An RNA of 177 nucleotides, treated with 2A3 and DMS and read out base by base. The 2A3 profile rests on 5,595 reads. For DMS the reverse transcriptase was MarathonRT. The RNA was probed in 150 mM KOAc, 10 mM MgCl2 and 150 mM bicine (pH 8.5) at 24 C. As a SHAPE reagent, 2A3 marks flexible, mostly unpaired nucleotides at the ribose 2'-OH. It was measured as part of the RMDB library OK2TRN.
[RMDB]
RNA sequence: GGGAACGACUCGAGUAGAGUCGAAAAUGGAUGAGCGUCUUAAAGUGGAGCAGCAUGCGUUUGAGCGUGGAUUUUAUCUGCCCAACCAGGCACUGCCCAAUAUCCACGACUCGCCAAAAUCGAUGAGCUCUUUACUAAGCUUCGGCUUAGUAAAGAGAAAAGAAACAACAACAACAAC
Reactivity to 2A3 in 0.01 (KOAc 150mM, MgCl2 10mM, bicine 150mM(pH8.5), 24C), signal-to-noise 4, nucleotides 027 to 126: u090g040g020a060u050g010a020g010c030g050u030c060u100u160a120a090a030g060u050g020g030a120g010c000a000g000c020a020u080g000c030g070u110u150u210g090a060g020c030g010u010g000g010a020u050u020u020u220a110u050c000u030g010c010c010c010a030a060c030c000a020g040g000c000a010c050u050g000c000c000c020a040a030u100a030u030c040c000a020c030g100a260c060u010c000g020c010c010a030a060a010a050u170c100g050a090u090g060a050g040
Reactivity to DMS in 0.01 (KOAc 150mM, MgCl2 10mM, bicine 150mM(pH8.5), 24C), signal-to-noise 5, nucleotides 027 to 126: u000g010g000a060u000g010a040g010c030g010u000c090u000u000a050a100a120g010u000g000g010a110g010c010a040g010c030a050u000g010c050g010u010u010u000g010a070g010c040g020u000g010g000a020u000u010u000u020a050u000c080u010g010c010c000c050a040a130c270c120a090g000g010c010a020c090u010g000c020c060c050a060a070u000a070u010c070c070a020c010g000a090c020u000c010g000c050c040a050a050a110a100u010c100g010a090u010g010a140g010